RNA sequence: GGGAACGACUCGAGUAGAGUCGAAAAGAUUAGUUGAAUUUAAGAGAAAACAAUAGUUGGUGAAUCCUUCAUGUAUGAGCACUUUGGCUUCAUACCAACCAUGGCAGUAAUCCCAGGUGGCUGUGAGGAUGACUGUUCAGUGUCUUGACAGGAGACACCUACACCCUUCCUUCGGGAAGGGUGUAGGAAAAGAAACAACAACAACAAC
Reactivity to 2A3 in 0.01 (KOAc 150mM, MgCl2 10mM, bicine 150mM(pH8.5), 24C), signal-to-noise 1, nucleotides 027 to 156: g070a040u190u210a070g030u070u090g070a050a020u110u120u180a180a040g050a010g070a020a120a000a040c060a070a070u200a140g050u010u060g000g000u040g010a020a070u040c020c000u010u070c060a100u050g020u040a020u020g010a010g020c010a020c090u070u140u140g110g000c000u050u020c000a060u030a110c040c010a020a020c020c000a020u000g010g000c000a000g050u030a050a030u030c000c000c060a040g060g030u070g050g000c090u070g030u070g000a150g040g000a000u020g040a030c020u000g000u030u260c020a070g020u050g060u100c000u000u090g070a090c020a120g010g000a030g000a000c000a000